[RMDB]
RNA sequence: GGGAACGACUCGAGUAGAGUCGAAAACUACACCACUAUCUGAUUCAUUCACUAUCAAUCGAUAAUAAGAUCUUUGAUAUGCUAACGGACGGCAUCGAUGACUUUAGUAAAUCAUCCGAUCUAUUGCAUGACAUGGCUCGUUCGCGAGCCAUGUCAUAAAAGAAACAACAACAACAAC
Reactivity to 2A3 in 0.01 (KOAc 150mM, MgCl2 10mM, bicine 150mM(pH8.5), 24C), signal-to-noise 1, nucleotides 027 to 126: c020u000a000c000a010c000c000a070c000u050a020u000c000u110g020a070u020u080c070a070u140u070c150a100c020u070a110u100c090a110a000u120c080g020a050u080a270a000u140a060a060g100a300u030c000u100u020u020g000a000u020a000u160g000c010u030a000a110c040g010g000a000c000g000g020c020a040u030c050g080a010u050g050a050c000u040u070u020a230g080u140a180a000a000u100c030a040u020c090c040g030a030u060c030u000a160u000u120g050c040
The record gives the reactivity of an RNA of 177 nucleotides to 2A3. Values cover nucleotides 27 to 126. Conditions: 150 mM KOAc, 10 mM MgCl2 and 150 mM bicine (pH 8.5), 24 C. It was measured as part of the RMDB library OK1LIB.